[RMDB]
An RNA of 170 nucleotides, treated with DMS and 2A3 and read out base by base.

RNA sequence: GGGAACGACUCGAGUAGAGUCGAAAAACUCUAUGCUAAGCGUGCUGUACGCUCGCAUCCCGAUUUCAAAUUGCUACACAAUUUACAAGCAGACAUUUGCUACAAGUUCGUCCUUUGGGAUUAUGAAUAAGAUGCCUGUUCGCAGGCAUCAAAAGAAACAACAACAACAAC
Reactivity to DMS in 0.01 (KOAc 150mM, MgCl2 10mM, bicine 150mM(pH8.5), 24C), signal-to-noise 4, nucleotides 027 to 129: a040c000u000c100u040a000u010g030c030u020a000a000g030c030g030u030g030c160u090g040u040a120c060g050c020u010c300g040c030a030u020c020c000c000g030a170u000u000u000c140a100a030a050u000u000g000c070u060a110c060a080c060a000a000u020u040u000a060c040a000a000g020c030a050g030a010c070a100u000u030u030g030c050u030a010c160a010a000g040u000u000c070g030u000c010c050u060u100u000g020g000g080a050u010u040a100u020g000a070a060u040a110a130
Reactivity to 2A3 in 0.01 (KOAc 150mM, MgCl2 10mM, bicine 150mM(pH8.5), 24C), signal-to-noise 6, nucleotides 027 to 129: a000c040u000c000u040a040u060g000c010u040a010a030g000c010g040u050g010c140u150g060u150a020c060g000c000u000c020g000c010a020u040c020c010c030g070a080u060u140u120c050a040a040a070u060u050g080c070u180a050c060a000c040a070a070u030u100u240a120c080a080a040g020c000a000g110a060c090a150u070u100u100g010c020u040a040c000a120a040g040u010u070c030g020u040c000c010u030u090u140g100g000g000a030u060u050a100u220g080a080a000u120a090a000
Reactivities are given for positions 27 through 129.
The DMS profile rests on 13,234 reads.
For DMS the reverse transcriptase was MarathonRT.
For 2A3, 12,861 sequencing reads were counted.